[RMDB]
RNA sequence: GGGAACGACUCGAGUAGAGUCGAAAAGUACAGGGCCCAUUCAACAAUCGAAUUGUCCGACGUAGCAAUGCAUUACAGGAUUGGGCUUAUGGCAAGCAAUUCCGCUACUCGGAGACGAUGAGUCUCGCGCUAAAUAGGCAUUCGUGCCUAUUUAGCGAAAAGAAACAACAACAACAAC
Reactivity to 2A3 in 0.01 (KOAc 150mM, MgCl2 10mM, bicine 150mM(pH8.5), 24C), signal-to-noise 9, nucleotides 027 to 126: g050u060a050c010a020g030g000g000c010c010c000a000u040u030c040a080a160c020a060a080u100c080g200a100a100u070u080g080u090c040c050g090a100c150g140u080a020g010c020a040a060u090g050c020a050u090u170a090c060a070g110g020a060u050u070g060g000g000c000u030u030a210u070g040g000c030a050a040g010c020a060a130u100u020c020c030g020c040u060a070c030u030c060g060g000a010g010a010c020g050a080u210g040a010g030u010c000u010c030g020
Reactivity to DMS in 0.01 (KOAc 150mM, MgCl2 10mM, bicine 150mM(pH8.5), 24C), signal-to-noise 4, nucleotides 027 to 126: g010u040a010c030a060g000g010g000c000c000c030a060u010u010c040a100a150c190a060a040u010c150g020a150a110u010u010g000u010c110c030g050a090c300g010u040a170g030c030a020a020u020g020c140a060u000u020a090c200a160g000g000a010u020u020g010g000g020c000u000u000a050u020g000g000c040a060a080g010c130a110a170u000u000c050c040g020c070u000a030c070u000c030g000g020a010g000a030c020g000a070u030g000a240g000u000c020u000c040g040